Structure probing data (2A3 and DMS) for a 207-nucleotide construct. For 2A3 the reverse transcriptase was SuperScript II with manganese. For DMS the reverse transcriptase was MarathonRT. The reactions ran in a buffer of 150 mM KOAc, 10 mM MgCl2 and 150 mM bicine (pH 8.5), at 24 C. It was measured as part of the RMDB library RNAMAK. 2A3 is a SHAPE reagent: it acylates the 2'-hydroxyl of flexible nucleotides of all four kinds.
[RMDB]
RNA sequence: GGGAACGACUCGAGUAGAGUCGAAAAACCUUUGUGAUUACGAAGUGUAGGACAUGCGAUUGGAGAGGCCCAUUGGGCCUUGGAAGAUCGCAACAGCCUACAUGGAGUAAUCACUCUGGUAAAGAGGACAGGAAUGAUUCGUCAUUCCUGUCCUCAAGGUACACCUUUAGUUCGCUAAAGGUGUACCAAAAGAAACAACAACAACAAC
Reactivity to 2A3 in 0.01 (KOAc 150mM, MgCl2 10mM, bicine 150mM(pH8.5), 24C), signal-to-noise 2, nucleotides 027 to 156: a000c000c000u000u000u000g000u000g010a000u000u000a000c000g000a040a000g010u000g000u000a000g020g020a050c070a140u040g000c010g000a010u000u020g040g000a060g000a010g010g010c000c010c040a120u230u300g040g000g000c010c000u010u000g020g060a000a020g000a000u000c010g000c000a000a000c010a000g020c010c000u000a000c000a000u000g000g000a010g000u000a000a000u000c000a000c000u000c000u000g000g020u040a060a080a000g000a000g020g010a000c000a000g000g030a000a000u010g020a040u050u150c260g010u020c040a000u000u000c000c000u000g000u010c000c000u000c000a000a000
Reactivity to DMS in 0.01 (KOAc 150mM, MgCl2 10mM, bicine 150mM(pH8.5), 24C), signal-to-noise 2, nucleotides 027 to 156: a020c000c010u000u000u000g000u000g010a060u000u030a000c020g030a300a300g030u000g040u000a060g030g010a030c030a300u000g010c020g000a000u030u000g000g000a300g090a040g040g030c000c000c000a300u000u000g070g020g020c010c000u000u000g000g000a300a230g020a000u000c000g010c000a010a000c050a100g000c000c000u000a000c000a020u000g010g000a300g020u000a000a000u000c000a010c010u000c020u000g000g000u000a020a070a100g020a020g000g020a020c000a010g000g020a000a000u000g000a070u000u000c240g060u000c010a000u000u000c000c000u000g000u000c020c000u000c000a000a040